An RNA of 177 nucleotides, treated with DMS and 2A3 and read out base by base. Source: RMDB libraries RFM100 and RFMREP, as collected in RNAgym. The reactions ran in a buffer of 150 mM KOAc, 10 mM MgCl2 and 150 mM bicine (pH 8.5), at 24 C.
[RMDB]
RNA sequence: GGGAACGACUCGAGUAGAGUCGAAAAAAGAAAUCAAAAAAGAUUUCUGAGACAAACACGCUUCACAAUGUGCGGCAAAGAAACAUUGUUUAUGCAAAGGCACUUCGCAAUGUGUGCUCAAACAUUGCUUCCUUUCUUUCUUCGGAAAGAAAGGAAGAAAAGAAACAACAACAACAAC
Reactivity to DMS in 0.01 (KOAc 150mM, MgCl2 10mM, bicine 150mM(pH8.5), 24C), signal-to-noise 6, nucleotides 027 to 126: a070a010g010a010a000a000u020c000a010a060a110a170a140a080g000a010u000u000u000c000u000g010a180g010a150c140a080a120a090c260a060c030g000c000u000u010c040a040c000a010a000u010g030u000g020c060g030g000c160a080a090a060g000a060a020a020c010a000u010u010g000u000u030u030a010u040g000c160a070a100a150g010g000c000a010c030u000u010c070g000c070a020a020u000g020u000g020u000g010c010u010c150a040a090a040c010a010u000u000g000
Reactivity to 2A3 in 0.01 (KOAc 150mM, MgCl2 10mM, bicine 150mM(pH8.5), 24C), signal-to-noise 9, nucleotides 027 to 126: a000a000g040a020a010a000u050c070a110a100a160a120a030a050g010a010u000u010u000c000u020g040a050g040a060c080a030a100a010c080a020c050g000c000u010u000c020a000c010a020a010u010g000u000g000c000g030g040c050a110a120a070g110a020a080a000c000a000u000u000g080u010u080u120a080u110g050c060a070a080a090g160g000c000a010c010u050u090c070g020c060a040a060u080g020u000g020u010g040c070u100c140a040a070a000c020a020u010u060g010